[RMDB]
RNA sequence: GGGAACGACUCGAGUAGAGUCGAAAAGGGCAUACGUCGGCGGCGGCCGGCGUCGCGAGCAUCCACAAAGUGCUGCUGUGCCUCGCGCAUCGCGAGCUGGUGCCGACGCUGAACUACGCGAACCCGAAGGACCGACCUAUUUCGAUAGGUCGGUCCUAAAAGAAACAACAACAACAAC
Reactivity to DMS in 0.01 (KOAc 150mM, MgCl2 10mM, bicine 150mM(pH8.5), 24C), signal-to-noise 1, nucleotides 027 to 126: g000g000g050c030a020u000a020c200g010u010c010g020g000c000g010g000c000g030g020c080c010g010g020c000g000u030c000g040c000g030a020g000c010a060u000c120c050a110c260a130a110a120g020u000g020c070u010g020c120u000g010u010g000c080c010u140c170g000c100g020c120a070u000c010g020c000g000a210g010c020u000g000g030u000g020c020c010g000a050c010g000c060u010g020a100a060c040u000a080c180g020c020g010a050a120c000c010c020g000a070
Reactivity to 2A3 in 0.01 (KOAc 150mM, MgCl2 10mM, bicine 150mM(pH8.5), 24C), signal-to-noise 1, nucleotides 027 to 126: g070g010g100c050a050u070a170c090g000u000c010g010g000c000g000g020c010g010g000c000c000g060g000c020g010u000c000g000c000g000a010g000c000a030u030c010c030a090c110a080a220a050g100u060g020c020u050g100c070u060g090u010g050c020c030u020c080g080c060g000c020a100u060c000g040c010g040a030g030c010u140g070g300u100g000c050c020g000a020c020g020c000u000g050a030a020c010u050a010c160g050c020g180a090a100c010c000c020g020a050